[RMDB]
RNA sequence: GGGAACGACUCGAGUAGAGUCGAAAAUCAGAGCCACGCAAGCCUCAGUCACCAGAUUCAUCUCAAACCUCCCGUUAAUGAUUUAUGGGAGGGUUUCAUCUCCACAUGGACUGCGGAGACCUACUGUCCCUGUUUCUUGAGUGGAAAGAGAAGGUCACUAUUUACUCGUGUUCGCACGAGUAAAUAGAAAAGAAACAACAACAACAAC
Reactivity to DMS in 0.01 (KOAc 150mM, MgCl2 10mM, bicine 150mM(pH8.5), 24C), signal-to-noise 3, nucleotides 027 to 156: u010c050a120g020a120g020c020c020a040c030g020c050a070a110g020c020c020u010c060a090g010u000c020a110c050c030a070g000a140u000u000c040a080u000c060u000c050a060a070a100c010c010u000c000c000c000g030u030u030a080a150u020g030a190u010u010u000a040u000g020g010g020a040g000g020g010u000u000u000c050a110u010c030u010c010c020a070c020a080u020g020g020a120c050u000g020c000g010g000a100g010a050c050c030u000a070c080u010g010u000c000c020c010u000g010u000u000u010c020u020u000g010a140g010u000g000g020a050a060a060g020a100g000a090a070g030g010u000c030a160
Reactivity to 2A3 in 0.01 (KOAc 150mM, MgCl2 10mM, bicine 150mM(pH8.5), 24C), signal-to-noise 6, nucleotides 027 to 156: u110c020a010g020a010g090c000c030a020c020g030c020a060a030g020c000c000u030c040a030g040u040c020a010c080c010a010g010a070u080u080c050a110u050c070u040c100a110a110a080c010c000u000c010c000c000g020u040u080a110a080u210g190a090u110u100u160a040u050g000g000g000a010g000g000g000u020u080u040c020a020u010c010u020c030c010a040c010a080u090g040g030a030c020u030g010c030g030g010a030g010a060c000c020u100a110c030u040g030u040c020c000c010u010g020u010u040u000c000u020u060g060a090g010u040g000g080a080a070a020g060a010g010a070a030g040g000u050c010a000

Source: RMDB library OK3TST, as collected in RNAgym. Structure probing data (DMS and 2A3) for a 207-nucleotide construct. For 2A3 the reverse transcriptase was SuperScript II with manganese. Reactivities are given for positions 27 through 156.